An RNA of 177 nucleotides, treated with 2A3 and DMS and read out base by base.
It was measured as part of the RMDB library M2PK50.
[RMDB]
RNA sequence: GGGAACGACUCGAGUAGAGUCGAAAAGUAACAAUCUUCGGAUUGUUACAUAGCCUCCAGGUGGAAACCAAAACCUAAGAAAGAAAAGAGAAAGAAAAAGAAGUGACUACCUGUUCGCAGGUAGUAAUAUCCGUUGUAGAUUCGUCUACAACGGAUAAAAAGAAACAACAACAACAAC
Reactivity to 2A3 in 0.01 (KOAc 150mM, MgCl2 10mM, bicine 150mM(pH8.5), 24C), signal-to-noise 2, nucleotides 027 to 126: g000u010a000a010c000a000a020u000c000u010u020c130g050g010a010u000u000g010u000u000a010c000a000u000a010g030c030c020u000c040c030a010g020g020u010g050g090a100a090a140c020c030a050a070a010a030c050c030u090a100a010g060a040a130a020g020a020a100a040a010g070a010g010a010a100a020g050a060a100a020a010a010g070a040a000g080u060g080a010c000u000a000c000c000u000g020u020u040c290g010c040a000g020g000u000a000g000u010a000a000
Reactivity to DMS in 0.01 (KOAc 150mM, MgCl2 10mM, bicine 150mM(pH8.5), 24C), signal-to-noise 2, nucleotides 027 to 126: g000u010a010a000c000a000a000u000c010u000u010c160g050g000a010u000u000g010u010u000a000c010a050u010a100g010c090c010u010c110c090a090g010g000u000g000g030a070a110a120c070c070a050a080a110a050c070c060u010a060a060g010a070a040a050g010a020a000a030a080g010a090g020a020a030a030g000a030a020a030a020a060g010a070a060g030u000g000a090c000u000a000c010c010u000g000u020u010c200g020c000a000g000g000u000a000g010u010a010a090

The reactions ran in a buffer of 150 mM KOAc, 10 mM MgCl2 and 150 mM bicine (pH 8.5), at 24 C. DMS (dimethyl sulfate) methylates the pairing face of unpaired adenines and cytosines.